[RMDB]
The record gives the reactivity of an RNA of 207 nucleotides to DMS and 2A3.
2A3 adducts were read by reverse transcription with SuperScript II with manganese.
The 2A3 profile rests on 3,255 reads.
DMS adducts were read by reverse transcription with MarathonRT.
The RNA was probed in 150 mM KOAc, 10 mM MgCl2 and 150 mM bicine (pH 8.5) at 24 C.
Source: RMDB library M2RFPK, as collected in RNAgym.
The DMS profile rests on 3,280 reads.
RNA sequence: GGGAACGACUCGAGUAGAGUCGAAAAGUUAAGCUAGCAGCAAAAAGGAACCGAUUCCCACCAAGUUCGGAAAGAGAUACCGGGCGAGGCGCUGAAGAAAGAAUCUCGCUUCAGACACCCCAAGGACAUGACCUUAAAAUGUUCGCAUUUUAAGGAAUCUGAUAAUACGAUUCGUCGUAUUAUCAGAAAAAGAAACAACAACAACAAC
Reactivity to DMS in 0.01 (KOAc 150mM, MgCl2 10mM, bicine 150mM(pH8.5), 24C), signal-to-noise 2, nucleotides 027 to 156: g030u000u020a090a100g020c070u000a080g070c050a080g000c040a030a050a090a120a110g010g000a070a120c050c040g030a150u000u000c010c010c010a130c030c020a090a260g030u000u000c040g000g010a080a080a100g000a120g000a150u000a060c040c020g000g030g040c020g000a120g010g020c050g010c030u000g000a040a080g000a080a080a090g000a080a080u000c030u010c080g010c000u000u010c020a060g000a300c060a080c000c000c000c000a040a090g000g010a130c060a060u010g000a140c000c000u010u010a000a030a000a010u000g030u000u010c240g020c030a000u000u020u000u000a000a020g000g000a050a060
Reactivity to 2A3 in 0.01 (KOAc 150mM, MgCl2 10mM, bicine 150mM(pH8.5), 24C), signal-to-noise 4, nucleotides 027 to 156: g020u020u070a070a030g020c020u060a020g010c090a010g000c040a050a050a080a070a060g100g010a060a010c050c030g060a110u030u020c000c010c000a000c000c020a060a010g020u030u030c020g020g070a150a070a020g090a070g010a040u070a100c010c020g000g010g000c010g010a030g000g020c050g020c030u040g010a030a010g020a040a260a030g060a100a120u060c060u050c120g030c010u020u020c030a050g030a090c020a080c020c030c000c030a030a030g070g010a030c030a130u140g080a080c000c000u000u000a000a020a000a000u010g000u040u050c120g000c090a000u010u000u000u000a000a000g000g000a000a060